[RMDB]
RNA sequence: GGGAACGACUCGAGUAGAGUCGAAAAAAAUUAUCUCUAGAUUACUUACAUUACCCCCAUACAAUGAAAAUGCUAAUGUACAUGCAAGUAUGUAUGUAAGUACUUGUACUAUAUUGUUUAGGGAAUCCUAGAUCUGCUGGUUCGCCAGCAGAUCUAGAAAAGAAACAACAACAACAAC
Reactivity to 2A3 in 0.01 (KOAc 150mM, MgCl2 10mM, bicine 150mM(pH8.5), 24C), signal-to-noise 1, nucleotides 027 to 126: a000a000a000u300u150a100u000c050u000c000u000a000g020a040u160u140a120c060u020u040a020c020a070u030u060a120c010c000c000c000c000a020u060a170c010a050a050u230g140a000a000a300a000u060g000c000u120a150a060u080g010u070a020c020a030u000g000c000a000a130g040u080a000u240g030u010a030u080g170u030a180a000g000u000a000c040u000u050g000u000a000c000u000a060u000a050u160u150g070u060u010u120a060g000g000g000a000a000u000c000
Conditions: 150 mM KOAc, 10 mM MgCl2 and 150 mM bicine (pH 8.5), 24 C. The record gives the reactivity of an RNA of 177 nucleotides to 2A3. Reactivities are given for positions 27 through 126. 2A3 adducts were read by reverse transcription with SuperScript II with manganese. Source: RMDB library OK1LIB, as collected in RNAgym.